[RMDB]
RNA sequence: GGGAACGACUCGAGUAGAGUCGAAAAAGUAAGCUGUGCAUUCGCUAUGUUUAGGUUUAGAAUGUAGUUUAGUGCUAGCUGAUUAGAGUGUGUUAAAGACUUGUAGAGCGCCUUAGGGAAGAGCUAAGUGGAGUAAUAACUUCGGUUAUUACUCCACAAAAGAAACAACAACAACAAC
Reactivity to 2A3 in 0.01 (KOAc 150mM, MgCl2 10mM, bicine 150mM(pH8.5), 24C), signal-to-noise 1, nucleotides 027 to 126: a000g090u040a010a010g010c010u020g080u090g140c010a000u050u030c010g010c010u000a000u020g040u010u060u020a130g110g060u080u090u050a080g020a010a010u020g010u020a000g030u050u070u110a010g010u010g010c000u000a000g000c010u010g000a020u030u130a090g040a000g050u100g000u000g020u040u100a110a110a040g020a060c020u040u080g080u150a050g000a020g110c040g020c020c020u020u030a050g020g000g000a000a060g020a050g090c000u070a140a020
Reactivity to DMS in 0.01 (KOAc 150mM, MgCl2 10mM, bicine 150mM(pH8.5), 24C), signal-to-noise 4, nucleotides 027 to 126: a090g010u010a170a040g000c010u000g010u000g010c010a010u000u000c300g000c010u000a000u010g020u000u000u000a110g040g010u000u010u010a070g010a010a010u000g000u010a000g010u000u000u000a030g010u010g000c000u000a020g000c000u010g000a110u020u000a090g000a090g010u010g010u000g000u000u000a060a070a110g000a110c060u000u000g010u010a090g000a080g020c070g000c050c030u010u020a070g000g010g000a060a060g010a110g010c050u020a040a090
An RNA of 177 nucleotides, treated with 2A3 and DMS and read out base by base. DMS adducts were read by reverse transcription with MarathonRT. Values are in units of 0.01, from 0 to 300, in steps of 10. For 2A3, 1,981 sequencing reads were counted. 2A3 is a SHAPE reagent: it acylates the 2'-hydroxyl of flexible nucleotides of all four kinds.